[RMDB]
RNA sequence: GGGAACGACUCGAGUAGAGUCGAAAAGCAUAGCGUCAAGUUGGUUGACCAGAAGUCUGGUUAGCAAACAGAGUAAAACCAAAAGGUUAGACGCACUCUGUGAAAAAGAACGAAAGUACAAAGAUAACAUAGAGACUAACUUCGGUUAGUCUCUAUGAAAAGAAACAACAACAACAAC
Reactivity to 2A3 in 0.01 (KOAc 150mM, MgCl2 10mM, bicine 150mM(pH8.5), 24C), signal-to-noise 4, nucleotides 027 to 126: g060c030a060u050a090g010c020g000u020c080a120a110g030u070u100g110g020u000u030g030a000c020c010a000g030a300a030g200u110c000u020g000g000u010u010a010g000c010a040a000a030c000a000g050a010g090u130a080a120a070a070c040c010a060a260a090a210g060g000u050u050a050g010a040c020g000c010a000c010u030c010u020g060u050g060a050a020a090a030a090g070a070a010c060g040a140a070a000g060u080a060c050a060a120a020g050a120u120a160a000
Reactivity to DMS in 0.01 (KOAc 150mM, MgCl2 10mM, bicine 150mM(pH8.5), 24C), signal-to-noise 5, nucleotides 027 to 126: g020c060a100u010a090g010c020g010u000c020a090a130g030u000u000g010g020u000u000g010a020c000c000a030g020a300a180g010u010c000u000g000g010u000u000a030g020c030a060a090a020c010a030g000a070g010u000a050a080a040a050c020c010a070a080a090a120g010g010u000u000a100g000a050c060g010c050a130c030u000c030u010g020u000g000a030a050a040a100a050g000a060a060c050g000a040a050a090g010u010a040c140a070a070a090g000a120u000a060a120